An RNA of 177 nucleotides, treated with 2A3 and DMS and read out base by base. For DMS the reverse transcriptase was MarathonRT. The RNA was probed in 150 mM KOAc, 10 mM MgCl2 and 150 mM bicine (pH 8.5) at 24 C. 2A3 adducts were read by reverse transcription with SuperScript II with manganese. The data come from the RNA Mapping Database (RMDB), library OK2TRN.
RNA sequence: GGGAACGACUCGAGUAGAGUCGAAAAUAUUGUGAUACGUAUCCAAUUUGAAGCCAAAUGCGUUACUUAAGCCACCAAUACCUACUGCGGCACCGUUUAACCCUGUUUCACCUAAUACACCUGGUGACACCAAUUAGAAAUUCGUUUCUAAUUGGUGAAAAGAAACAACAACAACAAC
Reactivity to 2A3 in 0.01 (KOAc 150mM, MgCl2 10mM, bicine 150mM(pH8.5), 24C), signal-to-noise 7, nucleotides 027 to 126: u110a020u020u100g040u070g040a030u060a090c090g070u120a050u000c020c010a030a040u070u060u150g100a090a020g030c030c000a020a070a070u130g010c040g030u040u030a040c020u080u080a080a010g020c000c000a030c020c020a040a030u060a110c020c000u020a040c030u040g020c010g040g000c010a010c010c020g020u040u030u060a050a050c000c000c000u010g070u020u040u010c010a010c000c000u020a050a050u100a180c090a020c060c040u040g030g000u020g010a000
Reactivity to DMS in 0.01 (KOAc 150mM, MgCl2 10mM, bicine 150mM(pH8.5), 24C), signal-to-noise 9, nucleotides 027 to 126: u010a060u000u010g010u010g010a070u000a100c230g010u010a070u000c020c030a050a070u000u010u010g010a110a130g010c040c030a050a080a070u010g010c070g010u000u000a050c100u000u010a060a120g010c050c030a040c060c040a050a080u000a070c060c030u000a070c070u000g010c070g000g010c030a050c050c030g000u000u000u000a100a100c040c020c020u000g010u000u000u000c010a010c010c010u000a030a050u010a120c150a070c120c140u000g010g020u000g000a100